[RMDB]
RNA sequence: GGGAACGACUCGAGUAGAGUCGAAAACAAGUAUGUUAGGACCCGAAAGAUGGUGAACUAUGCCUGGAUAGGGUGAAGUCAGAGGAAACUCUGAUGGAAGCUCGUAGCGGUUCUGACGUGCAAAUCGUCCUAUCCAUUUGUUCGCAAAUGGAUAGGAAAAAGAAACAACAACAACAAC
Reactivity to 2A3 in 0.01 (KOAc 150mM, MgCl2 10mM, bicine 150mM(pH8.5), 24C), signal-to-noise 9, nucleotides 027 to 126: c020a020a060g010u010a000u030g000u010u010a000g000g000a000c010c000c010g050a090a070a010g140a050u150g000g010u080g060a110a080c120u120a130u300g020c010c010u050g060g040a110u170a170g030g030g020u230g050a010a010g000u000c000a000g010a000g000g030a050a040a040c000u000c000u000g000a000u010g000g010a050a020g010c000u000c020g030u060a030g030c100g080g000u010u000c000u000g000a000c000g010u000g000c000a020a060a070u140c070g040
Reactivity to DMS in 0.01 (KOAc 150mM, MgCl2 10mM, bicine 150mM(pH8.5), 24C), signal-to-noise 6, nucleotides 027 to 126: c070a090a090g030u000a020u000g010u000u000a030g010g000a010c000c010c000g010a110a130a170g010a060u020g010g020u010g020a120a120c280u030a080u020g010c010c010u000g010g030a160u020a100g000g000g000u000g000a200a230g010u000c000a000g010a010g000g000a130a130a200c000u000c000u010g000a010u010g000g000a160a200g000c010u000c000g010u020a090g000c140g010g000u010u000c000u010g010a020c000g010u000g020c010a080a070a060u030c130g020
Chemical mapping of a 177-nucleotide RNA with 2A3 and DMS. For DMS the reverse transcriptase was MarathonRT. For 2A3 the reverse transcriptase was SuperScript II with manganese.